RNA sequence: GGGAACGACUCGAGUAGAGUCGAAAAUUCGAGAGCUCCUGGACUCCUCAGCUCUGGAGUCCUCCGACCCGUGAGGUCGAGGAUCCCCGCGCAGGGAGGCAGCCACCAGGAGAAAGCGGAGAAGUCAACACACGCCGGUUCGCCGGCGUGAAAAGAAACAACAACAACAAC
Reactivity to DMS in 0.01 (KOAc 150mM, MgCl2 10mM, bicine 150mM(pH8.5), 24C), signal-to-noise 1, nucleotides 027 to 129: u000u000c040g010a090g010a110g010c090u000c020c000u040g050g000a190c030u020c050c000u010c000a060g040c040u020c050u020g060g000a070g010u040c060c000u000c040c020g060a020c000c000c080g030u110g000a160g020g010u020c050g040a020g020g000a030u020c020c000c010c010g000c200g020c080a240g010g000g020a000g030g030c130a050g050c000c000a110c010c000a010g000g000a010g000a000a000a140g040c000g010g000a070g000a130a090g000u070c140a180a010c070a090
Reactivity to 2A3 in 0.01 (KOAc 150mM, MgCl2 10mM, bicine 150mM(pH8.5), 24C), signal-to-noise 3, nucleotides 027 to 129: u020u020c010g010a000g010a090g030c010u000c000c000u000g000g090a160c000u000c000c030u010c020a010g030c000u000c000u030g010g000a050g010u000c000c000u010c030c080g000a000c000c000c060g140u250g100a210g010g000u000c010g010a000g000g020a070u050c070c050c000c000g010c000g000c010a030g050g220g000a000g010g000c050a000g000c050c060a100c010c000a010g000g000a010g000a000a000a000g010c010g010g020a030g000a080a020g140u110c090a100a000c050a040